[RMDB]
RNA sequence: GGGAACGACUCGAGUAGAGUCGAAAAGACACGACGGAGACGUCGUGUCAAGUCCAGUGCGAAAGCACUGGACAAAUAAGGGCUGACUUUCUCGCUGACUUACAGCCCCAAACAAAUAAUGUCAGCACCCUAUAUUAUUAUUCGUAAUAAUAUAGGGAAAAGAAACAACAACAACAAC
Reactivity to 2A3 in 0.01 (KOAc 150mM, MgCl2 10mM, bicine 150mM(pH8.5), 24C), signal-to-noise 3, nucleotides 027 to 126: g000a000c000a000c010g000a000c020g030g010a060g030a040c000g010u000c010g010u000g010u000c000a000a000g000u000c000c000a010g010u000g000c010g100a130a030a040g000c000a000c000u000g010g000a000c000a000a010a000u070a040a060g010g000g000c000u010g010a030c110u020u060u030c120u080c120g010c000u000g020a000c000u020u050a020c010a000g010c000c000c040c040a040a080a010c010a020a040a010u080a040a030u120g000u000c010a000g000c000a050
Reactivity to DMS in 0.01 (KOAc 150mM, MgCl2 10mM, bicine 150mM(pH8.5), 24C), signal-to-noise 3, nucleotides 027 to 126: g020a020c010a010c000g010a000c010g010g000a300g000a220c000g020u000c000g020u000g020u000c000a030a070g010u000c010c000a000g030u000g010c000g010a100a090a140g000c000a000c000u000g000g020a000c010a010a070a040u000a120a140g000g010g000c000u000g010a070c190u000u000u000c040u000c130g010c010u000g000a030c000u000u000a040c010a030g000c020c000c010c180a030a050a130c090a040a030a080u010a010a050u000g010u000c000a000g010c000a300
An RNA of 177 nucleotides, treated with 2A3 and DMS and read out base by base. The reactions ran in a buffer of 150 mM KOAc, 10 mM MgCl2 and 150 mM bicine (pH 8.5), at 24 C. DMS adducts were read by reverse transcription with MarathonRT. For DMS, 3,402 sequencing reads were counted.